[RMDB]
RNA sequence: GGGAACGACUCGAGUAGAGUCGAAAAAAAUGGCAGAGUAAACGUCCACAAAAUAUUUGUUUCGGAAGAGAAGCGUAAAGGUAGGUUUACUUUCAAGACAUCAAAACGUUCACGAAACUGUAAUGGAUACUAGGGUACUAUUCGUAGUACCCUAGUAAAAAGAAACAACAACAACAAC
Reactivity to 2A3 in 0.01 (KOAc 150mM, MgCl2 10mM, bicine 150mM(pH8.5), 24C), signal-to-noise 2, nucleotides 027 to 126: a000a000a000u090g040g000c040a000g020a000g070u050a000a030a000c000g090u010c030c020a040c040a050a180a090a020u200a050u070u140u150g000u010u010u030c010g010g040a190a010g100a060g030a140a000g030c030g030u110a060a010a080g130g050u110a060g100g010u050u020u030a040c000u030u030u050c030a040a030g050a050c020a000u040c040a020a170a000a070c040g030u050u010c080a040c080g040a040a050a030c020u030g050u180a070a090u120g080g000a040
Reactivity to DMS in 0.01 (KOAc 150mM, MgCl2 10mM, bicine 150mM(pH8.5), 24C), signal-to-noise 5, nucleotides 027 to 126: a080a040a080u010g000g010c050a060g000a160g010u000a030a040a060c040g010u010c070c030a110c200a060a070a110a090u000a100u010u000u000g020u000u000u000c040g000g010a070a110g010a220g010a030a030g000c040g020u000a050a070a080g000g010u010a060g010g000u000u000u000a030c020u000u000u000c080a050a060g000a040c040a040u000c130a050a080a070a090c100g010u000u010c030a060c050g010a120a100a060c090u000g010u010a060a070u000g000g010a300